This 207-nucleotide RNA was probed chemically with 2A3 and DMS. The 2A3 profile rests on 3,490 reads. DMS adducts were read by reverse transcription with MarathonRT. Values are in units of 0.01, from 0 to 300, in steps of 10. Conditions: 150 mM KOAc, 10 mM MgCl2 and 150 mM bicine (pH 8.5), 24 C. The DMS profile rests on 4,759 reads.
RNA sequence: GGGAACGACUCGAGUAGAGUCGAAAAUGAAGCAAAUCCAUAAUUGCCAAUGAUGAGCAAUUCGCUAUUGCCGCCUAAAAAUGGUUAGCCGGGGCUGCUAGAGCCUUGUUACCAAAGAUAGCCGGCGUUACGGCAUGAUGGUUCGCCAUCAUGCCAACAAAUGACCUCUAUUCGUAGAGGUCAUUUGAAAAGAAACAACAACAACAAC
Reactivity to 2A3 in 0.01 (KOAc 150mM, MgCl2 10mM, bicine 150mM(pH8.5), 24C), signal-to-noise 5, nucleotides 027 to 156: u130g040a040a010g040c030a080a050a060u080c030c010a040u130a120a010u040u020g010c010c010a120a120u290g120a180u100g020a140g020c020a010a020u060u080c070g000c060u080a080u050u250g000c000c020g000c010c000u050a060a060a010a010a030u030g010g010u090u080a020g030c090c090g040g000g010g000c020u030g040c090u170a100g030a010g280c000c000u000u000g000u030u030a010c000c000a010a050a010g070a050u020a020g050c050c010g000g020c000g030u080u100a040c080g000g000c000a000u000g000a000u000g000g050u050u100c150g010c060c000a000u010c000a000u000g010c000c000a000a000
Reactivity to DMS in 0.01 (KOAc 150mM, MgCl2 10mM, bicine 150mM(pH8.5), 24C), signal-to-noise 2, nucleotides 027 to 156: u010g000a060a120g010c040a090a070a130u000c020c040a110u010a040a050u000u010g030c010c010a090a170u020g000a200u000g000a130g030c010a030a060u000u010c020g030c060u000a110u020u010g020c000c000g030c090c030u000a010a040a100a140a160u000g010g010u000u000a040g020c050c030g030g010g040g020c030u000g030c080u000a130g010a050g010c010c010u000u020g020u000u010a070c020c000a040a060a090g040a300u000a090g030c020c030g010g020c030g050u000u000a070c080g020g000c000a000u010g010a020u010g020g010u000u000c300g000c020c020a010u020c010a000u000g000c000c000a010a050